[RMDB]
RNA sequence: GGGAACGACUCGAGUAGAGUCGAAAACGCCGUGAUUCCAUGGAAUAAGGAGCGUUUAGGGGCCAGGUUAUUAAGCGACGAGGGGUGAAAUCUGGUGACUCGCUUAGGAGCAACAGAGGCGAAAGCGCUCAUAUGGUGGAUUCGUCCACCAUAUGAGAAAAGAAACAACAACAACAAC
Reactivity to DMS in 0.01 (KOAc 150mM, MgCl2 10mM, bicine 150mM(pH8.5), 24C), signal-to-noise 8, nucleotides 027 to 126: c060g000c010c040g030u020g010a070u000u010c020c040a090u010g020g000a070a050u000a100a160g010g000a100g000c020g000u000u000u000a100g010g000g000g010c040c030a080g020g010u000u010a090u020u020a060a070g010c040g000a040c050g000a060g000g000g010g020u000g010a050a080a120u040c010u000g010g020u020g000a080c300u000c010g000c090u010u020a060g000g000a060g000c040a050a060c090a050g010a090g000g000c010g000a070a070a100g010c110g010
Reactivity to 2A3 in 0.01 (KOAc 150mM, MgCl2 10mM, bicine 150mM(pH8.5), 24C), signal-to-noise 8, nucleotides 027 to 126: c030g020c010c010g080u080g060a110u070u030c030c030a070u150g080g080a060a020u090a110a080g090g000a060g030c010g020u030u010u090a060g010g000g010g000c020c000a020g010g040u030u010a110u090u090a090a040g050c040g050a050c010g020a050g020g040g000g000u060g050a040a020a030u030c020u010g060g020u030g060a060c010u000c020g030c020u020u070a060g050g050a040g010c000a010a060c010a050g040a020g050g000c020g010a070a020a000g060c050g000
Annotation: An RNA of 177 nucleotides, treated with DMS and 2A3 and read out base by base. For DMS the reverse transcriptase was MarathonRT. 2A3 adducts were read by reverse transcription with SuperScript II with manganese. The reactions ran in a buffer of 150 mM KOAc, 10 mM MgCl2 and 150 mM bicine (pH 8.5), at 24 C.